[RMDB]
Notes:
Conditions: 150 mM KOAc, 10 mM MgCl2 and 150 mM bicine (pH 8.5), 24 C. Structure probing data (DMS and 2A3) for a 177-nucleotide construct. The 2A3 profile rests on 1,046 reads. For 2A3 the reverse transcriptase was SuperScript II with manganese. The DMS profile rests on 700 reads. For DMS the reverse transcriptase was MarathonRT. Source: RMDB library OK2TST, as collected in RNAgym.

RNA sequence: GGGAACGACUCGAGUAGAGUCGAAAAGCCGGGCUGGUCGUCACCGGUACGGCGUUAAGCGGGGAAGUGAAGGUAGGCGAUUCACUCUGGCUGACUGGUGUAAAUAAACCGAUGCGCGUGCGUGCGCGGCAUGGAUGGCGUUCGCGCCAUCCAUGCCAAAAGAAACAACAACAACAAC
Reactivity to DMS in 0.01 (KOAc 150mM, MgCl2 10mM, bicine 150mM(pH8.5), 24C), signal-to-noise 1, nucleotides 027 to 126: g010c030c000g030g020g000c260u000g040g010u000c070g010u010c030a090c110c020g000g010u000a130c040g000g050c000g000u000u000a130a100g000c030g000g000g000g000a050a110g030u000g030a130a070g020g000u000a070g070g000c070g000a080u000u000c060a000c020u000c030u000g010g000c040u000g030a110c050u010g000g030u010g000u010a070a100a070u070a070a100a070c050c010g000a150u000g020c040g040c030g070u000g030c170g000u000g050c000g030c020
Reactivity to 2A3 in 0.01 (KOAc 150mM, MgCl2 10mM, bicine 150mM(pH8.5), 24C), signal-to-noise 2, nucleotides 027 to 126: g000c000c020g020g030g020c010u000g070g020u000c020g020u010c020a000c030c040g000g050u090a030c050g060g000c090g040u170u220a110a000g070c020g050g070g000g050a140a120g050u050g040a050a000g080g020u090a050g070g000c030g020a000u110u090c000a020c000u060c030u020g060g000c010u000g000a030c070u030g000g100u030g010u090a050a090a270u180a050a130a050c000c010g120a100u160g030c050g020c020g000u050g000c120g050u140g060c050g020c000